RNA sequence: GGGAACGACUCGAGUAGAGUCGAAAAGGAGUCACUUGAGAACCCAACCUACAUUUACCACUCCGCAUUCAUUGAGUGUGGAAGUUGUGGUAAUGAUUCCUGGCUUACAGGGAAUGCUAUCCAAGGGAAAUACGCGCUUUCGAGCGCGUAAAAAGAAACAACAACAACAAC
Reactivity to DMS in 0.01 (KOAc 150mM, MgCl2 10mM, bicine 150mM(pH8.5), 24C), signal-to-noise 4, nucleotides 027 to 129: g030g010a060g010u020c010a140c030u080u020g020a190g020a100a140c020c020c000a080a120c100c080u030a000c080a050u080u020u000a030c030c000a050c010u010c000c010g040c000a030u040u010c030a250u030u060g010a040g040u090g050u040g000g000a080a080g030u090u060g020u020g030g010u010a020a010u000g020a010u020u020c010c010u020g030g090c100u000u000a080c000a070g010g010g000a100a060u040g020c100u060a050u030c070c010a070a110g020g000g010a060a050a060
Reactivity to 2A3 in 0.01 (KOAc 150mM, MgCl2 10mM, bicine 150mM(pH8.5), 24C), signal-to-noise 4, nucleotides 027 to 129: g050g010a050g060u130c020a000c090u010u020g040a030g030a110a030c020c010c000a020a040c010c040u050a010c010a110u060u050u060a020c000c000a000c030u000c010c020g000c000a020u000u000c020a050u070u300g020a010g000u010g020u030g040g040a040a100g130u170u210g000u000g000g000u030a020a040u050g010a020u020u020c010c010u000g090g000c060u040u050a020c080a050g000g030g040a070a030u060g030c030u080a050u030c000c020a030a040g040g000g020a040a030a030